RNA sequence: GGGAACGACUCGAGUAGAGUCGAAAAGGCAUGGCAACGCUCGACAAUCAUGAGGAAGCCGUCAAACAGGCAGCCAUGGCCGACCGCAUCAUCCUCACCAAGACCGAUCUGCCGGAAGCACAGGCUAUGGAUUUACUACCUUCGGGUAGUAAAUCCAAAAAGAAACAACAACAACAAC
Reactivity to DMS in 0.01 (KOAc 150mM, MgCl2 10mM, bicine 150mM(pH8.5), 24C), signal-to-noise 1, nucleotides 027 to 126: g020g040c040a080u000g000g020c000a140a060c130g000c110u000c070g020a110c190a060a190u010c150a170u000g030a080g010g020a240a140g000c040c070g000u000c120a010a050a130c260a170g000g000c010a050g000c000c040a010u000g000g060c030c000g000a030c000c020g030c120a060u010c120a120u000c000c000u000c060a140c060c070a130a090g000a040c080c090g000a070u000c060u000g000c020c050g010g000a100a080g000c040a120c050a080g000g010c020u000a200

Conditions: 150 mM KOAc, 10 mM MgCl2 and 150 mM bicine (pH 8.5), 24 C. An RNA of 177 nucleotides, treated with DMS and read out base by base. DMS adducts were read by reverse transcription with MarathonRT.